[RMDB]
RNA sequence: GGGAACGACUCGAGUAGAGUCGAAAAGAUAUGGAAGUUAGUCGCUGGUUCAACGUUGAAAUCGGAAACGAUGGAGUUGACCAAAAGUCUAACUUCCUAAGUCAAAACGUCAAGUUCGCUUGACGAACUCAGAGGCGUAGUUCGCUACGCCUCUGAGAAAAGAAACAACAACAACAAC
Reactivity to 2A3 in 0.01 (KOAc 150mM, MgCl2 10mM, bicine 150mM(pH8.5), 24C), signal-to-noise 1, nucleotides 027 to 126: g050a020u050a040u120g020g000a020a000g010u010u020a000g010u050c040g000c230u040g040g050u300u280c000a000a020c010g140u280u050g040a050a040a010u000c030g060g000a110a130a040c030g010a000u000g000g000a040g000u000u000g030a000c000c000a020a110a020a020g080u000c000u000a000a000c010u000u010c000c000u000a030a000g010u000c000a060a090a030a000c030g040u000c000a000a010g040u040u120c200g040c240u020u000g020a020c000g040a030a030
Reactivity to DMS in 0.01 (KOAc 150mM, MgCl2 10mM, bicine 150mM(pH8.5), 24C), signal-to-noise 1, nucleotides 027 to 126: g010a040u010a300u000g000g050a040a010g010u000u000a000g010u000c040g010c300u000g000g000u010u000c000a000a010c000g010u000u040g070a080a130a040u010c000g000g000a030a110a180c010g000a020u030g000g010a090g000u000u000g000a050c010c000a030a010a140a150g000u000c010u000a000a000c010u000u000c000c000u010a010a060g000u010c030a050a080a150a130c010g000u010c000a000a010g000u010u000c200g000c020u010u000g000a040c000g000a060a120

Source information: Source: RMDB library TTRDEL, as collected in RNAgym. This 177-nucleotide RNA was probed chemically with 2A3 and DMS. DMS adducts were read by reverse transcription with MarathonRT. The reactions ran in a buffer of 150 mM KOAc, 10 mM MgCl2 and 150 mM bicine (pH 8.5), at 24 C. 2A3 adducts were read by reverse transcription with SuperScript II with manganese.